An RNA of 177 nucleotides, treated with DMS and 2A3 and read out base by base. Values cover nucleotides 27 to 126.

[RMDB]
RNA sequence: GGGAACGACUCGAGUAGAGUCGAAAAUCUGCCUCAUGUCUUUUAAAACGCUUCCACGGGACAUGGGUUCUAAUUAUGGAGAAGAUCAAGCUUUGAAAUGGCCCGUUUACACAUUUUGAUACAACCGCCAGACUAUAUUAUUCGUAAUAUAGUCUGGAAAAGAAACAACAACAACAAC
Reactivity to DMS in 0.01 (KOAc 150mM, MgCl2 10mM, bicine 150mM(pH8.5), 24C), signal-to-noise 7, nucleotides 027 to 126: u010c070u000g010c210c000u000c020a030u000g000u000c010u010u020u020u010a050a100a120a160c110g010c060u000u000c040c060a110c140g010g000g000a020c020a030u000g010g000g010u020u000c040u010a050a090u020u020a080u020g010g000a080g000a050a060g000a070u000c070a040a080g000c040u000u000u010g000a070a070a070u010g000g010c010c010c010g020u010u010u020a090c130a090c070a070u000u010u010u000g000a090u020a060c100a070a110c220c130g000
Reactivity to 2A3 in 0.01 (KOAc 150mM, MgCl2 10mM, bicine 150mM(pH8.5), 24C), signal-to-noise 9, nucleotides 027 to 126: u020c020u060g060c010c010u050c010a010u010g020u000c030u020u160u080u140a080a170a050a050c060g030c030u090u030c040c030a040c050g010g010g000a000c000a010u020g020g000g000u030u020c040u060a190a220u130u120a090u200g070g010a070g040a120a050g020a030u070c030a050a040g060c020u070u120u150g090a100a120a060u070g050g000c030c020c020g060u080u120u150a050c090a010c010a050u070u130u080u130g060a050u060a100c030a040a030c030c010g000